Description
Chemical mapping of a 207-nucleotide RNA with 2A3 and DMS. It was measured as part of the RMDB library M2RFPK. Conditions: 150 mM KOAc, 10 mM MgCl2 and 150 mM bicine (pH 8.5), 24 C. 2A3 adducts were read by reverse transcription with SuperScript II with manganese.
RNA sequence: GGGAACGACUCGAGUAGAGUCGAAAAACGAGCGCGCCACUACGGUGCCGCGCUCGAUGGAAGUAGAGACCAGUAACUACUCAAAUAAACGGGUAUAACUAAAAAACCUUAAGAGUAAGGUGUAAAAAAUACGCGUUCUAGUUCGCUAGAACGCGAACAUAGUGGAUGUGUUCGCACAUCCACUAUGAAAAGAAACAACAACAACAAC
Reactivity to 2A3 in 0.01 (KOAc 150mM, MgCl2 10mM, bicine 150mM(pH8.5), 24C), signal-to-noise 2, nucleotides 027 to 156: a000c020g000a000g000c000g030c010g070c080c030a030c030u140a090c210g060g000u020g000c040c000g000c000g000c010u000c010g000a000u020g070g110a020a030g020u010a000g000a020g040a090c000c080a030g020u070a060a050c010u030a000c020u080c160a050a040a080u100a060a060a000c010g000g000g080u100a100u110a150a060c120u200a080a100a000a020a000a050c020c000u040u000a090a030g070a000g260u030a010a020g050g010u040g030u050a060a100a010a000a000a110u140a100c040g020c000g000u000u000c000u000a000g020u060u000c080g000c190u000a000g000a000a000c010g000c000g010a000a000
Reactivity to DMS in 0.01 (KOAc 150mM, MgCl2 10mM, bicine 150mM(pH8.5), 24C), signal-to-noise 1, nucleotides 027 to 156: a050c010g010a040g000c000g040c010g020c060c000a080c030u010a100c300g040g000u000g030c150c000g030c000g000c000u000c020g000a030u040g000g010a270a110g010u000a070g000a210g000a240c000c000a050g000u000a090a140c030u010a050c030u000c160a020a190a190u000a030a100a130c010g000g000g060u000a060u000a060a150c090u090a000a060a080a100a100a050c050c000u000u000a140a080g000a180g030u000a020a050g000g000u020g000u010a000a050a080a140a050a160u000a070c000g000c000g000u000u000c010u000a000g000u000u000c300g050c000u000a000g000a000a010c030g010c000g000a000a090